Chemical mapping of a 177-nucleotide RNA with 2A3 and DMS.
Source: RMDB library OK1LIB, as collected in RNAgym.
2A3 adducts were read by reverse transcription with SuperScript II with manganese.
The DMS profile rests on 34,472 reads.
Values cover nucleotides 27 to 126.
RNA sequence: GGGAACGACUCGAGUAGAGUCGAAAAGACGGAAAAGAUCGAACCUAAGAAGAUCAGGUAGUGUCAGCCGAAUCCUAGGGCUCCUAGGGACGCAUCGUCGGAUGCGAAAUAAACACUAACGUCGAAAGAUUAUAGUCAUAUUCGUAUGACUAUAAUCAAAAGAAACAACAACAACAAC
Reactivity to 2A3 in 0.01 (KOAc 150mM, MgCl2 10mM, bicine 150mM(pH8.5), 24C), signal-to-noise 9, nucleotides 027 to 126: g000a000c010g040g040a070a070a050a060g020a020u040c020g020a080a120c030c060u100a120a070g100a070a010g010a070u020c020a010g040g080u040a010g010u010g020u040c080a030g080c090c060g070a060a040u050c000c010u010a020g040g060g110c070u090c050c000u010a010g000g000g010a020c010g000c010a010u010c010g280u080c130g130g010a000u000g000c000g020a040a070a010u130a010a080a000c020a000c020u050a090a010c010g020u010c020g050a060a050a020
Reactivity to DMS in 0.01 (KOAc 150mM, MgCl2 10mM, bicine 150mM(pH8.5), 24C), signal-to-noise 9, nucleotides 027 to 126: g000a030c010g010g000a100a080a130a100g000a010u000c000g010a090a150c130c120u030a100a110g010a120a150g010a020u010c010a100g010g020u000a020g010u000g010u000c090a130g020c150c130g010a120a100u030c000c000u000a010g000g010g020c150u060c020c000u000a010g000g000g000a140c020g000c010a010u000c010g010u060c290g010g000a010u000g000c000g000a040a070a050u010a090a090a030c030a010c020u000a050a100c020g000u000c010g010a090a100a090